Conditions: 150 mM KOAc, 10 mM MgCl2 and 150 mM bicine (pH 8.5), 24 C. An RNA of 177 nucleotides, treated with DMS and 2A3 and read out base by base. Reactivities are given for positions 27 through 126. The 2A3 profile rests on 467 reads. DMS adducts were read by reverse transcription with MarathonRT.
RNA sequence: GGGAACGACUCGAGUAGAGUCGAAAACUUCAGUAUCGAACGGUCGCCCACGUGAGAGGAGGUUGCGACGGAUUGCCCUGUUAGCUUUCUCUGAGGGUUGGGGGCGCGUUAAGAGUAUCCCCAUCGGAUAAAUAUAUUAAUUCGUUAAUAUAUUUAUAAAAGAAACAACAACAACAAC
Reactivity to DMS in 0.01 (KOAc 150mM, MgCl2 10mM, bicine 150mM(pH8.5), 24C), signal-to-noise 1, nucleotides 027 to 126: c060u010u020c090a110g010u040a070u010c030g010a100a050c030g000g010u000c010g000c000c010c000a000c030g000u030g010a030g020a070g000g000a020g010g020u010u040g010c110g030a040c020g000g000a270u030u030g000c190c030c010u000g000u030u010a130g000c000u010u000u020c030u000c010u000g040a160g000g010g040u060u010g000g000g000g010g000c030g020c020g000u010u000a030a170g000a060g010u040a050u010c030c000c030c140a080u010c150g000g000
Reactivity to 2A3 in 0.01 (KOAc 150mM, MgCl2 10mM, bicine 150mM(pH8.5), 24C), signal-to-noise 1, nucleotides 027 to 126: c020u090u080c080a060g050u090a070u260c090g030a060a020c000g070g010u020c000g150c020c000c030a050c080g070u130g120a050g000a040g010g000a000g050g030u110u040g080c110g070a010c070g060g030a120u110u210g050c030c070c010u050g000u000u050a010g000c000u030u000u000c000u000c000u050g050a090g000g090g000u110u100g030g020g000g010g010c090g050c000g080u010u040a080a020g030a010g030u060a070u050c000c000c000c000a030u060c070g030g000